[RMDB]
RNA sequence: GGGAACGACUCGAGUAGAGUCGAAAAAUCUAAUUCAGGUUAGCCAUUCGUUAGCGUGUCGGUUCGCAGGCGGUGGUGAAAUUAAAGAUCGACUAAGCAUGUAGUACCAAAGAUGAAUGGUUUUCGGACGGGGGUUCAACUCCCCCCAGCUCCACCAGAGUCUUGUAGUGUUCGCACUACAAGACUCAAAAGAAACAACAACAACAAC
Reactivity to 2A3 in 0.01 (KOAc 150mM, MgCl2 10mM, bicine 150mM(pH8.5), 24C), signal-to-noise 1, nucleotides 027 to 156: a000u070c070u130a090a050u210u070c040a040g030g000u030u100a010g030c010c010a070u210u170c070g010u030u170a030g030c030g050u120g030u020c000g000g070u040u000c030g000c110a080g000g000c000g000g000u040g000g000u030g030a080a020a000u140u160a060a110a000g080a030u040c040g010a020c010u090a180a030g130c010a020u060g010u140a100g010u080a090c000c010a010a000a070g040a010u010g020a060a080u030g020g070u000u050u040u130c010g000g000a010c010g020g000g000g030g000u050u130c040a000a010c010u040c000c030c000c030c000c030a000g000c070u020c030c000a070c000c000a040